[RMDB]
RNA sequence: GGGAACGACUCGAGUAGAGUCGAAAAUUGGCCACUGACAUAGCUGAAAUGGGAGCCAACCUUUGCGUGGAGCGAGUGCUGGAUUGCAGGACGGCUUUUAAGCCUGUGCUUGUGGAUGAAGGGAGGAUAAAAGCAGAGGGUUCGCCCUCUGCUUUUAAAAAGAAACAACAACAACAAC
Reactivity to DMS in 0.01 (KOAc 150mM, MgCl2 10mM, bicine 150mM(pH8.5), 24C), signal-to-noise 2, nucleotides 027 to 126: u010u000g010g010c010c020a060c060u000g000a110c090a050u000a070g000c050u000g000a040a090a100u010g010g000g030a110g000c030c070a030a170c040c040u010u000u010g000c080g000u030g000g000a130g000c060g010a060g030u000g040c050u010g000g000a100u010u010g000c040a030g000g020a140c060g010g020c030u000u000u010u000a070a120g010c030c010u000g040u000g010c050u000u000g020u000g000g000a080u020g000a130a060g000g010g020a040g000g000a190